[RMDB]
RNA sequence: GGGAACGACUCGAGUAGAGUCGAAAAACUCUUUGGAUACAGUUGUUCAACCAGUUACUAAUCUAACUAAUUGUAACCUGUUGAACAACUGAACCCAAAGGGUGCAAAAAAGGGGAGUUCGCUCCCCGUUAAAGCUCUUCUUCGGAAGAGCUUUAACAAAAGAAACAACAACAACAAC
Reactivity to 2A3 in 0.01 (KOAc 150mM, MgCl2 10mM, bicine 150mM(pH8.5), 24C), signal-to-noise 2, nucleotides 027 to 126: a000c000u000c010u010u010u010g040g000a090u090a140c010a000g000u000u010g000u030u000c000a010a010c020c010a010g000u010u010a020c050u200a010a050u050c020u030a020a140c010u030a060a070u030u030g000u000a000a000c010c010u020g000u010u000g000a000a000c000a000a000c000u000g000a000a000c010c000c000a000a000a000g000g000g000u030g040c040a040a070a060a040a070a060g000g000g000g000a010g010u030u040c090g060c050u000c030c000c010c000
Reactivity to DMS in 0.01 (KOAc 150mM, MgCl2 10mM, bicine 150mM(pH8.5), 24C), signal-to-noise 2, nucleotides 027 to 126: a000c000u000c000u010u000u000g000g010a030u000a130c000a000g000u010u010g000u010u000c000a010a010c000c080a080g000u000u000a010c000u010a030a020u010c020u010a110a160c220u020a180a010u000u000g000u000a000a000c000c050u010g010u020u000g000a010a010c000a000a010c000u000g000a020a020c090c000c000a000a010a020g000g000g000u000g010c140a000a040a080a020a040a100g000g010g000g000a030g020u000u010c250g000c000u000c000c010c000c010